[RMDB]
RNA sequence: GGGAACGACUCGAGUAGAGUCGAAAAGAGCGAUUAGACAAAGGGGUAGAGCUACAUAUUAGAUAGCUGUAUAAUCGUUCAAGUUACAUCAAAACAUCUUCAAUAUUUAUUAUUUACUUUCCUUUCUGCCAGAGUACGGUAUUCGUACCGUACUCAACUGGUAAGGUAUCUUCGGAUACCUUACCAGAAAAGAAACAACAACAACAAC
Reactivity to 2A3 in 0.01 (KOAc 150mM, MgCl2 10mM, bicine 150mM(pH8.5), 24C), signal-to-noise 3, nucleotides 027 to 156: g000a000g000c000g010a000u020u020a040g040a070c040a030a090a060g050g020g020g040u050a070g010a020g070c010u010a000c010a090u300a120u190u080a040g190a260u040a010g030c000u000g030u040a040u020a030a000u000c000g000u000u000c010a010a010g040u040u140a090c030a130u200c070a030a080a120a070c040a070u080c070u220u050c020a130a090u090a260u300u070u080a090u140u060a110u020u170u120a150c040u050u040u160c000c020u010u010u060c010u030g030c060c050a070g000a000g000u000a000c000g000g000u000a040u020u060c060g020u000a000c000c000g000u000a010c010u000c000a000a000